[RMDB]
Source information:
An RNA of 207 nucleotides, treated with 2A3 and DMS and read out base by base. 2A3 adducts were read by reverse transcription with SuperScript II with manganese. For DMS the reverse transcriptase was MarathonRT. The reactions ran in a buffer of 150 mM KOAc, 10 mM MgCl2 and 150 mM bicine (pH 8.5), at 24 C. It was measured as part of the RMDB library M2RFPK.

RNA sequence: GGGAACGACUCGAGUAGAGUCGAAAAAGAAUUGUACCACCACUGCGUAUCCUAAACGGGCUCUGCAGUGGUUAUUCUUGUAAAGUACUAGGAGUGAAUAGUGGCCCGUACUGCAGGCAUUAACAUUAAAAGGCAAUCCACUUCGGUGGAUUGCCAACUAACUGUGGUUGUUCGCAACCACAGUUAGAAAAGAAACAACAACAACAAC
Reactivity to 2A3 in 0.01 (KOAc 150mM, MgCl2 10mM, bicine 150mM(pH8.5), 24C), signal-to-noise 2, nucleotides 027 to 156: a000g100a070a020u160u050g070u180a080c030c000a000c000c010a010c040u000g000c000g020u100a100u180c000c020u040a140a070a070c110g000g000g000c030u010c080u160g000c020a010g000u010g000g000u000u000a000u000u000c010u020u040g020u050a080a120a090g070u010a070c080u070a100g050g020a070g130u080g100a050a090u080a170g010u040g080g040c050c020c010g010u000a040c010u040g050c020a020g020g030c010a020u120u140a160a010c020a070u110u170a060a140a130a060g000g000c000a000a000u000c000c000a010c020u140u090c270g020g000u010g010g030a000u000u000g000c000c010a010a000
Reactivity to DMS in 0.01 (KOAc 150mM, MgCl2 10mM, bicine 150mM(pH8.5), 24C), signal-to-noise 1, nucleotides 027 to 156: a060g000a060a020u000u020g000u010a080c050c090a080c010c010a060c010u000g000c020g010u000a090u000c010c020u010a080a110a150c100g040g000g000c040u000c060u020g020c010a030g000u010g010g010u000u000a000u000u000c030u000u000g020u000a070a100a100g010u010a050c020u010a040g030g030a060g030u000g030a070a080u010a040g020u000g030g020c030c010c030g000u000a060c050u000g000c050a080g020g010c050a080u000u000a030a100c070a130u000u010a040a030a110a110g020g030c010a000a000u000c000c000a020c000u000u010c300g080g030u000g010g000a000u000u000g010c010c000a010a000